This 177-nucleotide RNA was probed chemically with 2A3 and DMS. For DMS the reverse transcriptase was MarathonRT. For 2A3 the reverse transcriptase was SuperScript II with manganese. The reactions ran in a buffer of 150 mM KOAc, 10 mM MgCl2 and 150 mM bicine (pH 8.5), at 24 C. It was measured as part of the RMDB library 15KREP. For 2A3, 5,214 sequencing reads were counted.
[RMDB]
RNA sequence: GGGAACGACUCGAGUAGAGUCGAAAAACUGCACCUAGAAAUUCUUGGGAGGCUAUGGCUCUGAACUUUAAGUUAAUAGGUAUUGGCGGUACACCUUGUAUAAAGGUUGCUGCUAUGCAGUCUAAACCUAACAAAGAUGGUUCGCCAUCUUUGUUAGAAAAGAAACAACAACAACAAC
Reactivity to 2A3 in 0.01 (KOAc 150mM, MgCl2 10mM, bicine 150mM(pH8.5), 24C), signal-to-noise 5, nucleotides 027 to 126: a000c000u010g000c010a010c010c000u000a010g040a060a190a040u110u050c050u060u080g050g010g000a020g040g020c050u120a110u300g110g000c020u010c030u120g080a100a090c010u080u130u140a050a010g020u000u060a070a040u010a080g010g000u040a090u140u190g000g000c010g010g000u010a010c030a010c070c000u010u010g090u060a200u160a180a050a010g010g000u000u010g000c000u000g000c000u010a040u060g000c000a000g000u000c010u050a050a060a010c010
Reactivity to DMS in 0.01 (KOAc 150mM, MgCl2 10mM, bicine 150mM(pH8.5), 24C), signal-to-noise 4, nucleotides 027 to 126: a060c020u000g010c020a130c010c010u010a050g000a190a080a060u000u000c050u000u010g010g010g010a130g000g000c080u000a060u010g020g010c040u000c020u000g000a170a120c050u010u010u020a040a090g010u000u010a060a190u000a030g000g010u000a070u000u000g010g010c000g010g020u000a010c200a030c000c000u000u000g000u000a130u010a090a000a000g010g010u000u000g000c010u000g010c020u000a020u010g020c000a040g000u000c060u010a060a100a100c110